Chemical mapping of a 177-nucleotide RNA with 2A3 and DMS.
For 2A3 the reverse transcriptase was SuperScript II with manganese.
The reactions ran in a buffer of 150 mM KOAc, 10 mM MgCl2 and 150 mM bicine (pH 8.5), at 24 C.
For DMS, 2,826 sequencing reads were counted.
The 2A3 profile rests on 3,622 reads.

[RMDB]
RNA sequence: GGGAACGACUCGAGUAGAGUCGAAAAGAUAUGGACGCUCAUGAGGCAUCGAUCUAUGGUUAUGGUCACCUAUGUCGGAAACGACAUAGGUGAACGUCCAUAGGGAGCCUUGGAGCGUCCUAAGUCACUUUUCUCAGUAGUUCGCUACUGAGAAAAGAAAAGAAACAACAACAACAAC
Reactivity to 2A3 in 0.01 (KOAc 150mM, MgCl2 10mM, bicine 150mM(pH8.5), 24C), signal-to-noise 2, nucleotides 027 to 126: g010a000u010a000u070g020g000a000c010g000c000u010c120a300u270g020a010g010g010c010a120u300c220g020a020u000c030u010a000u010g090g000u240u220a280u300g300g080u080c020a010c000c000u000a000u010g010u020c000g000g000a000a030a030c010g010a000c000a000u000a010g000g000u000g020a000a000c000g010u050c000c000a000u000a000g000g000g000a000g010c010c000u020u000g030g020a000g000c010g010u020c000c000u000a000a000g000u000c010a030
Reactivity to DMS in 0.01 (KOAc 150mM, MgCl2 10mM, bicine 150mM(pH8.5), 24C), signal-to-noise 2, nucleotides 027 to 126: g020a010u000a240u020g000g000a010c010g030c000u000c000a210u010g010a010g000g000c010a300u010c270g000a050u000c030u000a010u000g010g000u010u030a120u010g040g010u000c010a030c000c000u000a000u000g010u000c000g000g000a030a060a080c000g020a030c020a000u000a010g000g020u000g010a000a020c050g010u000c000c000a020u000a010g010g000g000a020g000c010c000u000u000g010g010a000g020c000g010u000c010c010u000a010a040g000u000c010a290